[RMDB]
RNA sequence: GGGAACGACUCGAGUAGAGUCGAAAACGUCGGCGGCCGCAAGGUGGUUGCGGUGAUCUGCACGCACGGCCACAACGACCACGUGACGGUGGCCCCCGAACUGGGCACGGCGCUUGACGCACCGGUGCGUUUUAGGCAGGUUCGCCUGCCUAAAACGAAAAGAAACAACAACAACAAC
Reactivity to 2A3 in 0.01 (KOAc 150mM, MgCl2 10mM, bicine 150mM(pH8.5), 24C), signal-to-noise 2, nucleotides 027 to 126: c050g050u030c020g000g000c040g070g030c010c000g030c090a060a040g170g040u050g030g040u050u020g030c010g000g000u010g020a100u040c050u080g050c060a030c090g060c030a060c040g060g000c020c000a030c010a000a110c030g030a020c020c020a060c090g160u170g080a040c030g050g010u020g030g050c000c000c030c000c010g010a110a100c070u090g010g060g000c050a030c040g000g000c000g000c000u060u300g050a000c040g000c000a020c010c030g090g070u070g020
Reactivity to DMS in 0.01 (KOAc 150mM, MgCl2 10mM, bicine 150mM(pH8.5), 24C), signal-to-noise 3, nucleotides 027 to 126: c110g010u000c030g010g020c210g020g010c000c000g000c060a070a100g000g020u000g000g010u000u000g010c300g010g000u000g010a040u000c030u010g030c070a120c130g000c120a070c140g000g000c100c000a020c020a050a070c040g010a030c010c010a040c040g030u010g010a120c210g010g000u000g000g000c000c010c030c010c000g010a080a080c130u000g010g000g000c070a060c040g010g000c020g020c010u000u000g010a130c130g010c040a130c020c020g020g010u000g020

This 177-nucleotide RNA was probed chemically with 2A3 and DMS. The DMS profile rests on 3,193 reads. The data come from the RNA Mapping Database (RMDB), library OK2TST. For DMS the reverse transcriptase was MarathonRT. The 2A3 profile rests on 2,464 reads.